[RMDB]
RNA sequence: GGGAACGACUCGAGUAGAGUCGAAAAUGUAUAGUGGAGUUUUUGCUAGGAAUUCUGAUAUAGGGAUGGCUUCUUGGAACACCCCUACUACUCAUGGGGCCAACUCACUAAGCAUCAUGACAUGAAGAUGCAGGGCUCAGUGUAAAACUGGUAAAUGCAACAUGCCAGUAUUCGUACUGGCAUGUUGAAAAGAAACAACAACAACAAC
Reactivity to DMS in 0.01 (KOAc 150mM, MgCl2 10mM, bicine 150mM(pH8.5), 24C), signal-to-noise 2, nucleotides 027 to 156: u020g040u000a090u000a080g020u010g020g010a120g000u000u000u000u000u000g020c000u000a100g000g010a120a120u000u000c060u000g010a080u010a100u000a100g030g030g010a060u010g040g010c080u000u000c060u030u000g010g010a060a160c070a070c000c000c010c040u000a030c050u000a080c010u000c030a250u000g000g000g030g000c030c040a050a130c040u000c050a080c070u000a060a100g000c020a060u010c010a120u000g040a190c020a070u000g000a080a130g000a090u010g000c040a220g000g010g010c040u000c000a050g020u000g030u010a040a050a090a060c030u000g030g020u000a030a040a080u000g000
Reactivity to 2A3 in 0.01 (KOAc 150mM, MgCl2 10mM, bicine 150mM(pH8.5), 24C), signal-to-noise 3, nucleotides 027 to 156: u060g010u000a140u060a180g040u050g040g000a040g030u010u030u090u210u130g040c030u020a050g020g060a070a040u130u040c020u060g070a020u070a040u060a150g020g020g030a040u040g030g030c020u040u040c030u120u070g030g010a060a000c020a040c060c000c000c000u020a090c040u030a010c020u000c020a080u080g000g000g050g000c010c010a020a040c010u020c020a060c070u090a100a010g010c000a000u020c030a040u130g050a050c030a100u110g030a100a030g000a010u020g000c010a010g000g000g040c010u000c030a000g000u000g040u160a020a040a070a080c020u010g050g020u090a070a070a050u140g000